[RMDB]
RNA sequence: GGGAACGACUCGAGUAGAGUCGAAAAACUCAGAGUACAUACUUCUUUAUGUACCCAUAUGAACAUACAAUGCUAUGGAAUGUAAAGAAGUAUGUAUUUUUGGUAAAGAUCUAAGUUCGCUUAGAUCCUACAUGUUGCUCUUCGGAGCAACAUGUAGAAAAGAAACAACAACAACAAC
Reactivity to 2A3 in 0.01 (KOAc 150mM, MgCl2 10mM, bicine 150mM(pH8.5), 24C), signal-to-noise 1, nucleotides 027 to 126: a020c020u010c010a020g000a010g010u000a000c000a020u000a000c010u010u040c000u000u000u000a040u020g020u110a160c020c000c010a000u020a040u190g080a100a030c020a010u300a080c060a130a300u180g020c010u020a000u000g000g000a000a020u080g020u010a000a010a010g000a000a010g000u020a000u020g000u000a000u000u050u000u020u030g020g000u070a200a070a000g000a000u010c000u000a010a000g000u030u030c140g000c120u000u000a000g000a000u000c040
Reactivity to DMS in 0.01 (KOAc 150mM, MgCl2 10mM, bicine 150mM(pH8.5), 24C), signal-to-noise 1, nucleotides 027 to 126: a080c030u000c010a040g000a060g010u010a000c000a000u000a000c000u000u000c000u000u000u000a000u010g000u000a160c180c000c000a020u000a010u010g060a110a090c170a090u020a200c300a100a140u010g000c050u000a010u010g040g030a140a050u000g000u000a000a010a030g010a010a010g000u010a000u000g030u000a010u000u010u000u030u000g000g010u010a140a070a160g010a010u000c000u000a000a010g010u000u000c250g030c010u000u000a000g000a010u000c010
The record gives the reactivity of an RNA of 177 nucleotides to 2A3 and DMS. For DMS the reverse transcriptase was MarathonRT. The RNA was probed in 150 mM KOAc, 10 mM MgCl2 and 150 mM bicine (pH 8.5) at 24 C. For DMS, 862 sequencing reads were counted.